This 207-nucleotide RNA was probed chemically with DMS and 2A3.
[RMDB]
RNA sequence: GGGAACGACUCGAGUAGAGUCGAAAAAGUCAGAGGGCGCUACCAUGCAAACGAGGGCUGGCUACUCUUGCACAGAAUCACAUCUCGAUAAUUGUCAGUGCAAGAAGGACAAUUAUACCAUUUAAUGAAAACGUUUACCUGUUCGCAGGUAAACGAAGAUGAACAUAACGUUCGCGUUAUGUUCAUCAAAAGAAACAACAACAACAAC
Reactivity to DMS in 0.01 (KOAc 150mM, MgCl2 10mM, bicine 150mM(pH8.5), 24C), signal-to-noise 3, nucleotides 027 to 156: a090g000u010c050a090g010a100g020g020g010c050g030c050u000a040c030c030a080u010g000c030a090a090a060c130g000a080g030g010g000c040u000g020g010c050u000a150c020u000c020u000u010g000c000a050c020a150g000a110a140u000c050a100c090a090u010c050u000c060g030a130u010a020a030u000u000g000u010c030a300g020u000g000c020a070a050g020a060a110g000g010a030c030a040a070u010u000a040u000a080c070c020a170u010u010u020a040a110u000g010a110a090a130a190c010g010u000u000u000a010c010c000u000g020u000u000c300g090c020a010g030g010u010a000a000a010c000g020a010a080
Reactivity to 2A3 in 0.01 (KOAc 150mM, MgCl2 10mM, bicine 150mM(pH8.5), 24C), signal-to-noise 9, nucleotides 027 to 156: a000g040u030c020a000g020a070g050g050g020c040g000c040u070a140c050c040a090u200g020c070a090a050a040c050g020a090g020g050g020c010u010g010g000c010u070a080c000u020c000u010u010g000c020a000c000a010g120a090a070u150c040a050c020a210u050c070u070c120g060a020u010a040a010u020u020g010u010c010a010g000u010g010c010a010a000g020a010a020g020g000a000c000a000a010u030u010a030u040a090c030c070a100u160u190u200a170a140u200g090a060a040a030a010c000g000u000u000u000a000c000c000u010g010u040u050c200g010c060a000g000g000u000a000a000a000c000g000a000a010

For 2A3, 9,856 sequencing reads were counted.